Source information:
Chemical mapping of a 177-nucleotide RNA with DMS and 2A3. The data come from the RNA Mapping Database (RMDB), library M2PK50. The RNA was probed in 150 mM KOAc, 10 mM MgCl2 and 150 mM bicine (pH 8.5) at 24 C. 2A3 adducts were read by reverse transcription with SuperScript II with manganese.
RNA sequence: GGGAACGACUCGAGUAGAGUCGAAAAGACCAAUCGUUCGCGAUUGGUCAAAAGGUGGAUGCUACGCUUCCGAAGUAGCAAAAGUGCAGCUACAAAGCACAAAAACUUGGUUGUUCGCAACCAAGAACUUCCUGCUUACGUUCGCGUAAGCAGGAAGAAAAGAAACAACAACAACAAC
Reactivity to DMS in 0.01 (KOAc 150mM, MgCl2 10mM, bicine 150mM(pH8.5), 24C), signal-to-noise 1, nucleotides 027 to 126: g040a000c020c000a000a020u000c000g010u020u000c190g060c060g030a020u000u000g000g000u020c000a020a010a020a120g020g030u020g000g020a180u000g000c020u000a020c000g000c130u010u020c040c010g000a090a250g010u010a000g000c020a020a070a060a100g020u020g000c050a120g030c090u000a060c150a040a150a070g000c050a030c040a050a010a100a100a110c000u000u000g000g020u000u000g010u000u020c190g010c000a000a000c000c000a020a000g000a040a100
Reactivity to 2A3 in 0.01 (KOAc 150mM, MgCl2 10mM, bicine 150mM(pH8.5), 24C), signal-to-noise 1, nucleotides 027 to 126: g000a000c000c000a000a020u010c020g010u000u060c260g000c000g140a000u000u000g000g000u010c000a010a030a000a030g110g030u070g020g090a090u080g000c010u010a010c000g040c090u120u000c010c030g090a120a010g020u030a010g010c000a000a100a000a000g010u030g000c020a030g000c030u070a200c090a050a140a000g000c030a000c000a010a070a000a020a020c000u000u000g010g030u000u000g000u010u120c230g000c030a000a000c000c000a000a000g020a020a010